[RMDB]
Chemical mapping of a 177-nucleotide RNA with 2A3 and DMS. Reactivities are given for positions 27 through 126. For DMS, 2,501 sequencing reads were counted. The RNA was probed in 150 mM KOAc, 10 mM MgCl2 and 150 mM bicine (pH 8.5) at 24 C. The 2A3 profile rests on 2,042 reads.

RNA sequence: GGGAACGACUCGAGUAGAGUCGAAAAGACCGGAACGGUCAAGUUCACACAGCCUCUUCCGACCGGAGUAGAGGCGUAUUGGACUGGAGACUGGAAAGGUGGGUCUGCGACCGAGCCGGCCAGAUUCGAUAUCCAUGGACUUCGGUCCAUGGAUAUCAAAAGAAACAACAACAACAAC
Reactivity to 2A3 in 0.01 (KOAc 150mM, MgCl2 10mM, bicine 150mM(pH8.5), 24C), signal-to-noise 2, nucleotides 027 to 126: g030a000c000c000g000g040a050a050c020g000g000u020c030a020a000g010u020u000c010a010c000a000c010a040g000c010c000u020c030u040u000c030c050g300a300c090c200g050g030a030g040u150a000g020a010g010g000c010g000u000a020u020u060g000g000a000c020u020g120g080a010g010a010c020u040g010g160a040a080a100g230g000u090g020g030g000u000c010u000g080c070g020a030c010c020g010a040g050c010c000g030g000c000c040a080g020a110u130u140c050
Reactivity to DMS in 0.01 (KOAc 150mM, MgCl2 10mM, bicine 150mM(pH8.5), 24C), signal-to-noise 3, nucleotides 027 to 126: g020a080c000c000g020g010a090a100c050g010g020u000c020a090a120g000u000u000c020a020c100a050c070a240g010c000c000u000c000u010u010c010c000g020a150c300c220g000g000a090g020u010a030g000a020g000g010c010g000u000a010u000u000g010g010a010c010u000g020g010a030g000a020c000u000g040g000a050a050a180g020g000u000g000g010g010u000c010u000g010c140g000a060c000c000g000a090g000c000c000g000g010c010c020a100g010a160u010u000c150